[RMDB]
RNA sequence: GGGAACGACUCGAGUAGAGUCGAAAAGUUGAAGGCGCAACCCGGCGGUGGAUUCAGUGGGCUUGGUAGUUCACCGCUGAGCUUGAUGCGCUCGCGGCGAUCGUCCGGGUUCAGGCGCGGCGUCGCAACGUAGGUACCUCUUCGGAGGUACCUACGUAAAAGAAACAACAACAACAAC
Reactivity to DMS in 0.01 (KOAc 150mM, MgCl2 10mM, bicine 150mM(pH8.5), 24C), signal-to-noise 2, nucleotides 027 to 126: g000u000u010g010a070a140g030g010c010g020c020a030a130c050c000c000g010g010c000g000g030u000g000g000a020u000u010c170a100g020u000g000g000g010c060u010u000g000g010u030a020g000u000u000c000a030c000c000g030c000u010g000a010g000c140u010u000g030a130u000g000c080g020c000u000c070g010c080g010g010c000g000a080u010c030g020u020c010c010g010g010g040u000u000c210a110g010g010c070g000c000g000g030c040g030u000c030g020c040a110